[RMDB]
RNA sequence: GGGAACGACUCGAGUAGAGUCGAAAAAGCUCCUGUUUCGACAGGAGCUGUGUGGCUGCCCUUUUGUGCUCGAUGUAGAGUGCUUUCCUGCCGGAAAGGCCUUGAGAGCUUGAUUCGUCAAGCUCAAUUUCAUACUUUUAUUCGUAAAAGUAUGAAAAAAAGAAACAACAACAACAAC
Reactivity to 2A3 in 0.01 (KOAc 150mM, MgCl2 10mM, bicine 150mM(pH8.5), 24C), signal-to-noise 5, nucleotides 027 to 126: a000g010c000u010c010c000u010g020u020u090u050c180g090a010c000a000g000g000a000g000c000u000g010u010g000u010g050g000c040u040g030c030c000c000u050u080u050u070g060u030g000c010u010c020g070a100u190g080u180a070g020a020g040u040g020c000u020u020u010c010c020u050g100c050c030g020g040a230a110a030g050g010c000c020u140u150g150a130g000a010g080c000u000u010g020a020u020u060c170g010u000c110a000a000g000c020u000c000a010a010
Reactivity to DMS in 0.01 (KOAc 150mM, MgCl2 10mM, bicine 150mM(pH8.5), 24C), signal-to-noise 9, nucleotides 027 to 126: a020g010c000u000c000c000u000g000u000u000u010c150g010a040c000a010g000g000a010g010c000u000g010u000g020u000g010g010c040u000g000c050c020c040u000u000u000u000g010u000g010c020u000c020g010a140u010g010u000a130g000a050g010u000g000c020u000u000u000c010c010u010g010c100c060g010g010a060a080a100g000g010c040c100u000u000g010a190g010a020g010c000u010u000g010a040u000u010c200g010u000c000a010a010g010c000u000c000a030a060